Source information: Structure probing data (DMS and 2A3) for a 177-nucleotide construct. DMS adducts were read by reverse transcription with MarathonRT. The reactions ran in a buffer of 150 mM KOAc, 10 mM MgCl2 and 150 mM bicine (pH 8.5), at 24 C. It was measured as part of the RMDB library OK2TRN. High DMS reactivity at an A or C suggests that its Watson-Crick edge is free.

RNA sequence: GGGAACGACUCGAGUAGAGUCGAAAAUUGCGGCGGCUGGCGGCGAUGCGCUGCUACAUGCGCGACAUCAACCUGGGCCGGGAGACCCAGCCCCACAUCCCGGAAUCGGUCGGGAUGACCGAGGAGCCAUGCUUAGGUUGUUCGCAACCUAAGCAUGAAAAGAAACAACAACAACAAC
Reactivity to DMS in 0.01 (KOAc 150mM, MgCl2 10mM, bicine 150mM(pH8.5), 24C), signal-to-noise 4, nucleotides 027 to 126: u010u010g020c020g010g010c130g020g000c030u010g010g000c080g020g030c210g000a030u010g000c000g020c010u000g050c030u000a100c260a090u020g040c010g010c010g010a120c050a030u000c020a100a130c090c030u000g000g000g020c040c040g010g000g000a130g000a130c240c000c010a040g010c010c000c000c020a040c050a080u000c000c000c000g000g000a270a160u000c020g000g000u000c010g010g010g000a150u010g000a010c000c030g000a030g000g010a220g020c180
Reactivity to 2A3 in 0.01 (KOAc 150mM, MgCl2 10mM, bicine 150mM(pH8.5), 24C), signal-to-noise 3, nucleotides 027 to 126: u120u060g030c020g010g040c070g010g020c030u020g010g070c060g000g040c070g010a020u040g010c000g000c060u220g000c010u100a130c060a150u270g000c000g000c000g060a150c020a030u050c020a040a100c020c040u100g030g090g000c040c000g020g020g000a100g040a040c010c000c010a000g000c000c010c000c010a010c000a010u020c010c000c000g000g000a030a060u030c030g000g020u010c060g070g170g090a210u230g010a030c000c000g000a020g000g010a000g000c050